The data come from the RNA Mapping Database (RMDB), library OK2TRN. Structure probing data (2A3 and DMS) for a 177-nucleotide construct. 2A3 adducts were read by reverse transcription with SuperScript II with manganese. For 2A3, 2,028 sequencing reads were counted.

RNA sequence: GGGAACGACUCGAGUAGAGUCGAAAACGUAGUCGUCGAGAUGAAACGAGCCGACUUCGGCGGGCACCAUCCGCGCGUCGAUCCAGUCGGUGAUGUAGACCUUGUGGUCCUGCAGCAGCGUGCGGAAACGAUGCUCCAGUUUCGACUGGAGCAUCGUAAAAGAAACAACAACAACAAC
Reactivity to 2A3 in 0.01 (KOAc 150mM, MgCl2 10mM, bicine 150mM(pH8.5), 24C), signal-to-noise 1, nucleotides 027 to 126: c030g040u040a020g020u030c020g020u000c040g020a030g000a180u170g090a110a040a030c030g000a040g000c000c000g030a020c000u020u010c010g000g020c020g000g130g050c030a070c050c040a110u080c110c000g000c040g010c000g030u030c000g030a040u010c080c040a020g070u050c000g070g020u020g000a010u070g030u020a010g000a010c010c000u070u270g240u220g090g010u050c000c100u030g000c020a070g000c010a010g020c010g060u050g000c010g020g030a060a030
Reactivity to DMS in 0.01 (KOAc 150mM, MgCl2 10mM, bicine 150mM(pH8.5), 24C), signal-to-noise 2, nucleotides 027 to 126: c020g000u000a070g010u010c020g020u000c050g010a140g010a130u000g010a050a090a110c030g020a290g020c050c010g000a030c040u010u000c010g010g010c050g010g010g040c070a170c110c110a120u000c110c080g000c000g000c020g030u000c030g000a080u000c190c210a080g010u000c030g010g000u000g000a050u000g030u000a030g010a080c050c010u000u020g010u000g020g000u000c070c030u000g010c050a030g000c020a140g010c020g010u000g000c060g010g000a050a110